This 177-nucleotide RNA was probed chemically with 2A3 and DMS. For DMS the reverse transcriptase was MarathonRT. Reactivities are given for positions 27 through 126. The reactions ran in a buffer of 150 mM KOAc, 10 mM MgCl2 and 150 mM bicine (pH 8.5), at 24 C.

RNA sequence: GGGAACGACUCGAGUAGAGUCGAAAACGACGUAGUUUCGACUACGUCGACAGGGAAACGAGCCAAGUGGCGCCGACCACUUAAAAACACCGGAAAAUAAAUGAGCCCGUACUUUCGAGUACGGGAAAUGUCAAUAUUACUUCGGUAAUAUUGACAUAAAAGAAACAACAACAACAAC
Reactivity to 2A3 in 0.01 (KOAc 150mM, MgCl2 10mM, bicine 150mM(pH8.5), 24C), signal-to-noise 6, nucleotides 027 to 126: c010g000a000c000g000u010a010g020u030u070u100c200g070a020c000u000a000c000g000u000c000g000a040c010a030g060g000g060a080a100a080c080g010a060g060c020c010a030a010g010u000g010g010c030g010c010c000g260a300c000c000a010c030u190u200a020a000a010a000a000c070a010c020c010g020g000a020a090a040a040u110a010a040a070u040g060a030g080c000c000c020g000u000a000c010u040u070u160c230g080a000g010u000a000c000g000g000g000a030a000
Reactivity to DMS in 0.01 (KOAc 150mM, MgCl2 10mM, bicine 150mM(pH8.5), 24C), signal-to-noise 7, nucleotides 027 to 126: c010g010a010c000g010u000a000g010u000u000u000c180g020a040c000u000a000c000g010u000c000g010a040c110a110g000g010g000a070a060a110c120g010a130g010c030c060a100a020g010u000g000g000c000g020c010c000g000a160c000c000a000c010u000u000a000a000a000a010a010c160a010c010c000g000g000a050a100a080a110u010a040a070a120u000g010a180g010c000c000c000g010u000a010c000u000u000u010c160g010a020g010u000a000c000g000g000g000a000a010